An RNA of 177 nucleotides, treated with DMS and read out base by base. Conditions: 150 mM KOAc, 10 mM MgCl2 and 150 mM bicine (pH 8.5), 24 C.

RNA sequence: GGGAACGACUCGAGUAGAGUCGAAAAGCUGGCGCGGCUACACCCGGAGGUGAGGCCGGAGGACGACCUGAUCGUGCCCAGGGUGAAGCCGCUACGGGGGGUACCGGAGCGUGAGGUGCGAUGGGUGUGUACAUGACGCUUUCGAGCGUCAUGUACAAAAAGAAACAACAACAACAAC
Reactivity to DMS in 0.01 (KOAc 150mM, MgCl2 10mM, bicine 150mM(pH8.5), 24C), signal-to-noise 1, nucleotides 027 to 126: g000c070u000g000g010c140g040c000g000g030c010u020a140c020a010c000c000c010g030g010a180g030g030u010g010a030g000g020c000c000g000g010a150g020g010a300c030g010a010c020c000u010g000a050u000c070g020u000g030c110c010c070a200g020g010g060u000g000a130a050g000c000c020g020c010u000a030c080g020g000g000g020g010g010u020a090c110c050g010g000a280g010c080g010u010g010a100g010g030u000g030c050g000a100u000g010g000g020u010g010